[RMDB]
RNA sequence: GGGAACGACUCGAGUAGAGUCGAAAAUGCAUUACCAACCGGGCGAUGUUGAGAAGUAUAACAAGGGACAUUUGAGCUCUUUGGUAGCAGAUUGUAUUGAUAUCAUUGCAUCAAAUGUUAGCUGUGACAGUGGUCACUAUUUCGAUAGUGACCACUGAAAAGAAACAACAACAACAAC
Reactivity to 2A3 in 0.01 (KOAc 150mM, MgCl2 10mM, bicine 150mM(pH8.5), 24C), signal-to-noise 1, nucleotides 027 to 126: u040g000c030a030u080u080a080c000c030a060a060c090c090g030g060g010c070g010a040u070g010u060u030g080a060g040a180a040g090u180a090u020a290a060c060a030a030g070g030g000a000c000a020u030u060u080g030a040g030c000u000c010u020u080u020g060g040u040a080g020c080a040g090a120u040u240g120u160a160u200u020g040a040u000a010u050c010a030u000u050g000c020a060u060c020a030a000a030u110g000u070u060a110g050c010u080g000u090g090a030
Reactivity to DMS in 0.01 (KOAc 150mM, MgCl2 10mM, bicine 150mM(pH8.5), 24C), signal-to-noise 5, nucleotides 027 to 126: u010g010c050a040u010u010a100c030c030a120a110c120c120g000g010g030c070g010a050u000g010u000u000g000a070g010a060a100g020u000a070u010a080a050c080a050a080g010g000g000a030c020a020u000u000u000g010a030g010c130u010c080u000u000u000g020g000u000a010g000c030a040g000a100u010u010g020u010a170u010u000g000a050u000a020u000c010a020u000u000g010c250a190u000c020a000a010a010u000g000u000u000a080g010c050u000g010u000g000a240